[RMDB]
RNA sequence: GGGAACGACUCGAGUAGAGUCGAAAAAGGAGGAAAGUAAAGAAAGCAACGGGGCUAGCCGGUGGGUGUUCCGCCUCCCGAGAGGGCACGAGUGAGGCUUAUCCCGGGGAACUCGGCGAAUCGUCCCCUCUAAUAAAGCGUUCGCGCUUUAUUAGAGAAAAGAAACAACAACAACAAC
Reactivity to 2A3 in 0.01 (KOAc 150mM, MgCl2 10mM, bicine 150mM(pH8.5), 24C), signal-to-noise 1, nucleotides 027 to 126: a040g050g030a010g000g070a070a040a030g050u190a140a210a090g030a060a160a000g080c000a080a020c000g020g000g060g000c030u010a010g050c010c020g020g000u090g030g010g010u170g070u100u010c030c000g020c000c000u020c010c000c000g020a020g010a020g020g030g050c050a050c120g030a100g080u130g040a120g000g000c000u000u050a220u050c020c000c000g000g020g000g020a060a010c030u040c070g000g010c000g010a050a080u050c010g000u000c000c000c000
Reactivity to DMS in 0.01 (KOAc 150mM, MgCl2 10mM, bicine 150mM(pH8.5), 24C), signal-to-noise 2, nucleotides 027 to 126: a040g000g000a050g000g010a010a020a090g010u010a090a100a140g000a060a090a120g010c040a050a060c070g020g000g010g000c090u010a110g030c020c020g020g050u000g010g020g020u020g010u010u010c060c070g010c040c020u000c020c030c010g000a050g010a070g010g000g000c070a030c070g010a130g010u000g000a090g000g000c030u000u000a090u010c010c010c000g000g000g040g000a090a070c040u000c050g000g010c000g010a020a040u010c050g010u010c000c010c010
Background: Structure probing data (2A3 and DMS) for a 177-nucleotide construct. High DMS reactivity at an A or C suggests that its Watson-Crick edge is free. The 2A3 profile rests on 1,100 reads. 2A3 adducts were read by reverse transcription with SuperScript II with manganese.